[RMDB]
This 177-nucleotide RNA was probed chemically with 2A3 and DMS. DMS adducts were read by reverse transcription with MarathonRT. Source: RMDB libraries RFM100 and RFMREP, as collected in RNAgym.
RNA sequence: GGGAACGACUCGAGUAGAGUCGAAAAUAUCCCCUUUCCCUCUCCCGAGUGCACUCAGUUUAACUGUUGUCAGUUUUUACUCAGUGUUGGAUUUAAUUAUGUAGGACCAAAACAUUCCUCAGUAAAUAUUCACGUUCUGAUUCGUCAGAACGUGAAUAAAAGAAACAACAACAACAAC
Reactivity to 2A3 in 0.01 (KOAc 150mM, MgCl2 10mM, bicine 150mM(pH8.5), 24C), signal-to-noise 4, nucleotides 027 to 126: u120a030u060c010c000c000c000u020u050u020c020c000c000u030c030u000c000c010c030g080a040g070u130g000c010a010c010u020c010a010g000u000u010u060a050a030c010u000g090u230u170g170u300c010a010g010u000u010u050u000u020a020c000u000c000a020g000u010g030u100u080g030g020a050u080u120u180a150a130u170u100a100u160g160u110a040g020g020a040c050c010a040a030a000a090c040a030u080u030c010c010u030c010a010g030u070a040a070a070u030
Reactivity to DMS in 0.01 (KOAc 150mM, MgCl2 10mM, bicine 150mM(pH8.5), 24C), signal-to-noise 2, nucleotides 027 to 126: u040a110u000c010c000c010c090u000u010u000c020c010c000u000c010u000c020c000c000g020a110g030u010g020c080a020c030u010c130a100g010u000u000u020a050a050c050u020g050u060u000g020u040c100a060g000u000u000u000u000u000a030c020u000c100a090g010u000g000u010u010g010g010a120u010u010u010a050a190u060u030a050u000g000u000a030g000g010a050c070c070a010a040a080a060c160a160u000u000c010c020u020c070a070g020u040a040a070a130u020

Conditions: 150 mM KOAc, 10 mM MgCl2 and 150 mM bicine (pH 8.5), 24 C. The 2A3 profile rests on 2,315 reads.